The record gives the reactivity of an RNA of 177 nucleotides to DMS and 2A3. DMS adducts were read by reverse transcription with MarathonRT. The RNA was probed in 150 mM KOAc, 10 mM MgCl2 and 150 mM bicine (pH 8.5) at 24 C. Values are in units of 0.01, from 0 to 300, in steps of 10. The 2A3 profile rests on 860 reads.
RNA sequence: GGGAACGACUCGAGUAGAGUCGAAAACAAAAACGGAUUGUGUCAGUAAUCACAACAAACAAAAACAAAUGGAUUGUGUCCUUAAUCACAAAAACAAAACAAAAGGGAUUGUGUCCGUAAUCACAAACAUCAUGGUGAGCUUCGGCUCACCAUGAUGAAAAGAAACAACAACAACAAC
Reactivity to DMS in 0.01 (KOAc 150mM, MgCl2 10mM, bicine 150mM(pH8.5), 24C), signal-to-noise 1, nucleotides 027 to 126: c060a000a030a000a040a150c050g080g000a000u000u030g020u000g000u000c220a150g000u000a260a000u020c000a060c050a300a020c090a020a100a090c120a000a060a000a130a060c110a140a000a080u000g000g000a170u000u000g050u000g000u000c090c030u000u000a050a090u030c000a000c000a000a040a030a040a240c080a260a070a050a120c110a060a090a000a000g000g000g000a150u100u090g000u000g000u000c000c030g000u040a000a040u000c100a080c170a080a000a000
Reactivity to 2A3 in 0.01 (KOAc 150mM, MgCl2 10mM, bicine 150mM(pH8.5), 24C), signal-to-noise 2, nucleotides 027 to 126: c060a000a110a140a000a000c050g030g080a130u040u030g000u000g050u030c040a160g130u130a050a090u160c030a020c000a050a010c040a060a090a000c060a030a150a000a000a000c090a040a110a010u130g000g000a020u000u010g010u000g030u150c030c000u030u120a080a050u140c010a040c000a000a050a000a070a000c070a080a110a000a000c000a000a020a000a020g060g000g030a010u000u000g000u000g010u000c000c000g160u200a020a080u100c020a000c080a060a030a010